[RMDB]
RNA sequence: GGGAACGACUCGAGUAGAGUCGAAAAUGACACGUCACCGUGAGUAGUUCGUGCCAAAACUUUUUGAGUCGCGGGGCAUUUCCGCAGGUCGGAGAUAUAAGAAAAAGUGAAAGUUGGCACGAACUACGCAGACCUGUAGUUUCGACUACAGGUCUGCAAAAGAAACAACAACAACAAC
Reactivity to 2A3 in 0.01 (KOAc 150mM, MgCl2 10mM, bicine 150mM(pH8.5), 24C), signal-to-noise 2, nucleotides 027 to 126: u070g040a000c010a000c070g070u070c060a040c160c030g010u050g030a030g000u010a000g000u000u000c020g010u000g000c020c010a000a020a050a080c070u000u040u030u040u140g170a090g070u110c020g000c080g140g090g050g000c040a030u060u050u040c010c010g000c130a150g160g100u130c010g000g050a040g010a030u050a020u080a130a080g140a100a030a020a000a000g070u150g120a160a000a020g060u050u000g000g000c000a000c000g010a000a000c000u010a010c010
Reactivity to DMS in 0.01 (KOAc 150mM, MgCl2 10mM, bicine 150mM(pH8.5), 24C), signal-to-noise 2, nucleotides 027 to 126: u010g000a190c030a040c030g010u000c070a150c130c040g000u010g010a210g000u000a030g010u000u000c000g020u000g010c000c000a010a080a150a060c000u010u000u000u000u000g010a100g020u020c050g010c110g030g000g000g030c280a040u000u000u000c000c000g020c030a080g010g000u010c010g000g010a010g010a000u000a150u000a100a190g000a020a050a010a020a000g010u000g010a070a050a210g010u000u000g000g020c000a020c000g000a000a020c010u000a000c020
About this RNA: Structure probing data (2A3 and DMS) for a 177-nucleotide construct. The 2A3 profile rests on 1,466 reads.